Structure probing data (2A3) for a 207-nucleotide construct. Conditions: 150 mM KOAc, 10 mM MgCl2 and 150 mM bicine (pH 8.5), 24 C.
RNA sequence: GGGAACGACUCGAGUAGAGUCGAAAAUUGAUGCCAAUAAUUUAUAUCUGCAUGUAUGUGUAAAUAAUUAGGUAUGCGAUCUAGAAAAGCACUAGGUAACUGAAACAUUAACAUCUGCUGAAACACGUCACAAACAUGGAAUAAUUCUAAUGAACCACCUCGUAUUUACCUUCGGGUAAAUACGAGGAAAAGAAACAACAACAACAAC
Reactivity to 2A3 in 0.01 (KOAc 150mM, MgCl2 10mM, bicine 150mM(pH8.5), 24C), signal-to-noise 2, nucleotides 027 to 156: u060u070g020a010u040g030c040c010a020a000u080a060a020u080u110u050a060u020a090u050c050u030g060c060a100u100g060u080a080u060g010u040g030u000a040a030a000u070a030a070u070u040a020g050g000u010a010u070g050c080g020a050u050c000u000a010g070a110a120a020a000g040c010a010c030u010a000g000g000u070a080a000c010u030g130a010a030a070c020a040u020u080a000a100c010a010u040c040u040g000c000u000g080a010a090a020c040a000c030g070u060c040a020c080a160a170a030c020a040u010g000g040a030a020u060a050a030u130u040c040u100a100a070u150g060a000a000c000c060a020
For 2A3, 819 sequencing reads were counted.